Structure probing data (2A3 and DMS) for a 177-nucleotide construct.
2A3 adducts were read by reverse transcription with SuperScript II with manganese.
The RNA was probed in 150 mM KOAc, 10 mM MgCl2 and 150 mM bicine (pH 8.5) at 24 C.
RNA sequence: GGGAACGACUCGAGUAGAGUCGAAAAAGAUAUUCGUGAAUGUGAUUUUGACUUCCUUACAUGGGUGACUGUGUGAGUCACUCUGUUACUUACUGGCCAGGCUUGUGGAGGUCGGGAGGUAUUUGACUGUAAAAACCGAAUUCGUUCGGUUUUUACAAAAAGAAACAACAACAACAAC
Reactivity to 2A3 in 0.01 (KOAc 150mM, MgCl2 10mM, bicine 150mM(pH8.5), 24C), signal-to-noise 1, nucleotides 027 to 126: a000g100a060u130a040u090u160c080g000u090g170a080a070u150g050u060g090a090u080u000u010u040g060a050c020u010u030c020c000u070u110a040c030a120u120g020g000g000u000g000a010c000u000g020u070g060u090g300a030g010u000c000a000c010u020c000u010g020u020u050a020c000u010u010a030c000u000g050g090c000c010a030g090g000c060u220u260g070u130g200g140a030g050g000u010c010g000g010g000a010g040g000u010a140u040u120u090g060a020c030
Reactivity to DMS in 0.01 (KOAc 150mM, MgCl2 10mM, bicine 150mM(pH8.5), 24C), signal-to-noise 5, nucleotides 027 to 126: a070g000a100u000a070u010u000c070g010u010g010a090a070u000g020u000g000a110u000u000u000u010g010a120c160u000u000c020c010u000u010a070c090a040u000g010g000g020u000g000a020c000u000g020u010g020u010g010a050g010u000c010a000c010u000c010u000g010u000u000a040c080u010u000a090c050u010g010g010c020c030a110g020g000c060u010u010g010u000g000g020a110g010g010u000c020g000g000g000a300g010g010u000a040u010u000u010g010a120c150